[RMDB]
RNA sequence: GGGAACGACUCGAGUAGAGUCGAAAAGGCCUUGAGCCAUUUUGAAUCCCUGGCAGACCUUCCCGUCGAAAAGAAGGGCCAUCUGGACCUCGUGACCCAGGCGGACAAGCAGGUUGAGGAAUUCCUGACCUAGGGUAUAGUUCGCUAUACCCUAGGUAAAAGAAACAACAACAACAAC
Reactivity to 2A3 in 0.01 (KOAc 150mM, MgCl2 10mM, bicine 150mM(pH8.5), 24C), signal-to-noise 9, nucleotides 027 to 126: g020g010c030c040u150u240g050a050g010c010c020a110u060u060u040u130g160a080a060u030c010c000c000u010g030g010c030a040g010a100c010c010u050u040c000c010c020g060u090c060g060a070a060a040a040g140a040a050g030g020g000c010c000a060u050c040u080g040g020a070c010c020u060c060g090u130g030a040c000c010c000a020g060g000c000g010g020a040c020a060a020g020c020a020g040g000u060u070g030a040g030g040a040a080u070u030c000c000u010g040
Reactivity to DMS in 0.01 (KOAc 150mM, MgCl2 10mM, bicine 150mM(pH8.5), 24C), signal-to-noise 7, nucleotides 027 to 126: g010g020c000c010u050u030g010a140g000c010c010a060u010u000u000u010g000a170a090u010c020c010c010u000g000g010c080a080g010a140c070c050u000u000c010c010c020g000u010c070g000a080a090a100a110g020a110a080g010g000g000c040c010a100u020c060u030g010g000a100c040c020u010c060g020u030g000a080c050c020c020a060g010g000c050g000g020a070c060a070a100g020c050a060g000g010u010u010g000a050g000g010a130a130u010u010c010c000u010g020
Background
The record gives the reactivity of an RNA of 177 nucleotides to 2A3 and DMS. The reactions ran in a buffer of 150 mM KOAc, 10 mM MgCl2 and 150 mM bicine (pH 8.5), at 24 C. 2A3 adducts were read by reverse transcription with SuperScript II with manganese. Reactivities are given for positions 27 through 126.